[RMDB]
RNA sequence: GGGAACGACUCGAGUAGAGUCGAAAAGUCAUCAUGAUAGAUUGUGAUUUGCAACAUCCACCUGAAUAUAUUCCGAAAAUGGUUGAAGGUUUUAUGGAAGGCUAUGAUCAAGUGAUUGCAAAGCGUGUAUCAAGGUUCUGUUCGCAGAACCUUGAUAAAAAGAAACAACAACAACAAC
Reactivity to DMS in 0.01 (KOAc 150mM, MgCl2 10mM, bicine 150mM(pH8.5), 24C), signal-to-noise 4, nucleotides 027 to 126: g010u030c050a030u010c050a070u030g010a100u000a070g000a150u010u010g020u020g010a090u010u000u000g000c070a020a050c190a100u010c110c040a050c010c050u000g000a090a050u000a070u030a110u010u000c000c000g020a040a050a060a060u020g010g000u010u020g010a110a140g010g000u020u000u000u000a080u090g000g000a060a040g000g010c130u030a030u010g010a050u010c030a030a020g010u010g000a110u000u010g000c020a040a030a050g000c120g010u020g020
Reactivity to 2A3 in 0.01 (KOAc 150mM, MgCl2 10mM, bicine 150mM(pH8.5), 24C), signal-to-noise 4, nucleotides 027 to 126: g170u100c050a020u010c000a030u110g150a150u120a200g160a060u040u090g030u050g090a050u030u020u180g000c050a040a030c000a080u020c020c010a050c000c000u000g060a110a000u100a000u020a040u130u100c040c000g100a060a000a040a100u230g200g000u130u100g050a120a100g100g000u070u000u100u090a150u120g030g070a030a040g040g010c010u060a040u120g040a020u060c080a120a020g000u020g090a190u020u040g040c000a020a050a050g050c080g070u090g040